The data come from the RNA Mapping Database (RMDB), library OK2TST. An RNA of 177 nucleotides, treated with DMS and 2A3 and read out base by base. For DMS, 2,723 sequencing reads were counted. 2A3 adducts were read by reverse transcription with SuperScript II with manganese. For 2A3, 1,937 sequencing reads were counted. Conditions: 150 mM KOAc, 10 mM MgCl2 and 150 mM bicine (pH 8.5), 24 C.
RNA sequence: GGGAACGACUCGAGUAGAGUCGAAAACAUGAGAAUUACCGUUUUAGUGGCCAGUUUGAUCUUGGGUUGCGCGGGCUCUGCGCAUGUUCUAGCGGCCUCGCAAGCGGCGGGAUCACAGGUUGAGCAAGUACCUGCUAGGAUUCGUCCUAGCAGGUACAAAAGAAACAACAACAACAAC
Reactivity to DMS in 0.01 (KOAc 150mM, MgCl2 10mM, bicine 150mM(pH8.5), 24C), signal-to-noise 2, nucleotides 027 to 126: c090a080u020g000a130g000a190a110u020u000a120c080c060g010u000u000u000u010a130g040u000g010g000c020c000a080g020u000u010u010g010a030u000c010u000u010g010g020g010u010u000g010c030g010c160g010g010g020c050u020c070u000g020c020g000c070a100u010g010u000u010c050u000a060g010c040g010g000c110c000u000c020g000c060a060a060g010c140g000g000c040g000g000g010a030u000c030a050c100a060g000g000u000u000g000a060g000c100a060a170
Reactivity to 2A3 in 0.01 (KOAc 150mM, MgCl2 10mM, bicine 150mM(pH8.5), 24C), signal-to-noise 1, nucleotides 027 to 126: c050a090u220g060a060g140a300a140u200u080a120c010c010g060u030u060u070u130a140g030u090g040g000c040c020a060g000u060u120u160g040a030u020c010u060u070g100g000g100u090u030g020c030g000c040g030g060g000c040u030c070u180g000c030g000c010a060u130g080u070u040c020u030a010g000c030g010g010c010c020u000c000g030c000a040a050g070c030g220g030c000g010g000g000a000u030c000a010c000a030g000g090u060u080g020a030g040c030a120a070